[RMDB]
The data come from the RNA Mapping Database (RMDB), library OK2TST. This 177-nucleotide RNA was probed chemically with DMS. For DMS the reverse transcriptase was MarathonRT.
RNA sequence: GGGAACGACUCGAGUAGAGUCGAAAAUGGAUGAACUGGGAACCGUCACACGUGACCGCGCCAUUCCCCGAGUGAUGGCUGCGGCGCUGCUGUCAUCCACGGAACAGGCAUUUGAACGGCAGGCAGAUCUCGUCUGACGGUUCGCCGUCAGACGAGAAAAAGAAACAACAACAACAAC
Reactivity to DMS in 0.01 (KOAc 150mM, MgCl2 10mM, bicine 150mM(pH8.5), 24C), signal-to-noise 1, nucleotides 027 to 126: u000g030g010a160u000g020a090a040c110u030g040g000g020a090a090c040c000g000u000c010a080c090a060c130g030u000g010a120c020c010g000c060g080c080c010a110u000u000c040c040c090c110g010a170g020u010g030a080u000g000g000c010u000g040c040g000g020c110g000c020u000g010c050u000g030u010c000a060u000c050c040a170c110g000g010a060a170c080a040g000g000c300a060u020u040u010g020a100a080c090g000g010c010a060g040g030c060a060g010a090
For DMS, 653 sequencing reads were counted. Conditions: 150 mM KOAc, 10 mM MgCl2 and 150 mM bicine (pH 8.5), 24 C.